[RMDB]
RNA sequence: GGGAACGACUCGAGUAGAGUCGAAAAACGCAGAGUAUCGUUAAGAUGUCCAUAUUGUUGUUUUAGGCCCGCUAGUAAUGCGCUACGGGUAUUUAAUAUUGUUAAACCCUGAUAAUCGCUCCGGUUACGAUAUUUCCUACUUCGGUAGGAAAUAUCGAAAAGAAACAACAACAACAAC
Reactivity to DMS in 0.01 (KOAc 150mM, MgCl2 10mM, bicine 150mM(pH8.5), 24C), signal-to-noise 2, nucleotides 027 to 126: a090c020g000c070a070g000a100g030u000a030u000c020g000u000u090a120a100g010a090u000g000u030c050c020a110u030a130u000u010g020u010u000g020u000u000u000u000a040g000g000c040c000c020g020c160u000a050g040u020a120a090u030g020c090g020c080u010a070c070g020g000g010u000a010u010u010u000a010a080u020a130u000u030g000u050u020a060a090a060c040c020c000u020g000a080u010a060a070u000c050g000c040u020c020c020g000g010u000u010a120